[RMDB]
RNA sequence: GGGAACGACUCGAGUAGAGUCGAAAAGAUAUGGAGAAGGUCUGAAAGCUAUGAAGUCGGAAACGAUGGAGCUUAAGACUUCUCCUAAGUCAAAAUCAGAGUGUCGUCUUCGGACGACACUCUGAAAGCACAUACAACAGUUCGCUGUUGUAUGUGCAAAAGAAACAACAACAACAAC
Reactivity to DMS in 0.01 (KOAc 150mM, MgCl2 10mM, bicine 150mM(pH8.5), 24C), signal-to-noise 1, nucleotides 027 to 126: g040a050u030a300u000g020g020a000g000a040a000g020g010u000c000u000g000a140a140a030g000c000u000a080u000g000a110a220g000u000c030g030g000a120a100a120c010g020a010u010g000g030a000g030c000u000u000a240a030g010a030c000u000u000c000u030c000c000u010a020a050g020u000c020a080a070a220a110u000c000a010g010a030g030u020g020u000c010g000u000c000u000u000c200g040g000a000c000g000a000c000a000c000u020c000u000g010a000a010a090
Reactivity to 2A3 in 0.01 (KOAc 150mM, MgCl2 10mM, bicine 150mM(pH8.5), 24C), signal-to-noise 2, nucleotides 027 to 126: g000a020u110a020u140g000g010a010g000a030a050g130g300u000c010u050g060a190a170a020g020c000u070a190u300g040a050a000g010u000c000g030g000a080a060a000c020g000a000u010g020g000a000g000c000u000u010a010a000g010a000c010u010u000c000u050c000c000u000a050a000g000u000c030a080a100a000a230u030c010a010g020a010g050u030g030u010c040g000u020c010u160u240c300g080g000a000c000g000a010c000a000c000u010c010u010g000a000a000a000
Annotation: This 177-nucleotide RNA was probed chemically with DMS and 2A3. Reactivities are given for positions 27 through 126. For 2A3 the reverse transcriptase was SuperScript II with manganese. It was measured as part of the RMDB library TTRDEL. 2A3 is a SHAPE reagent: it acylates the 2'-hydroxyl of flexible nucleotides of all four kinds.